[RMDB]
RNA sequence: GGGAACGACUCGAGUAGAGUCGAAAACUCUUCUGCUUCGGCAGAAGAGAAAAUAACGCUGGCGUGGGACACAGCCGGAGCUAGCCUCAGAUAGUGUCAGUAAAAUCGGAUAGUUCGCUAUCCGAAAGAGACAAGUCUAGUUCGCUAGACUUGUCUCAAAAGAAACAACAACAACAAC
Reactivity to 2A3 in 0.01 (KOAc 150mM, MgCl2 10mM, bicine 150mM(pH8.5), 24C), signal-to-noise 1, nucleotides 027 to 126: c000u000c000u000u000c000u000g010c020u070u060c220g110g000c000a000g010a010a000g000a010g000a000a010a000a000u020a040a030c060g010c210u110g000g000c020g050u180g120g100g000a030c020a020c010a020g010c070c000g030g000a000g000c040u070a040g030c040c010u000c000a000g020a010u150a090g060u040g010u020c010a000g090u190a000a150a060a130u040c000g000g000a000u000a010g000u030u020c250g000c090u020a000u000c000c000g010a000a000a000
Reactivity to DMS in 0.01 (KOAc 150mM, MgCl2 10mM, bicine 150mM(pH8.5), 24C), signal-to-noise 1, nucleotides 027 to 126: c000u000c000u000u000c000u000g000c020u000u010c240g050g000c000a000g000a000a000g000a000g000a000a000a030a060u000a170a190c070g010c180u010g000g000c000g020u010g000g010g000a010c030a000c030a140g000c010c030g000g010a030g000c020u010a100g020c170c000u010c010a110g030a040u000a060g050u000g000u000c020a180g000u010a090a080a080a080u010c000g000g010a010u000a000g020u000u030c160g000c000u010a000u000c000c000g000a000a060a060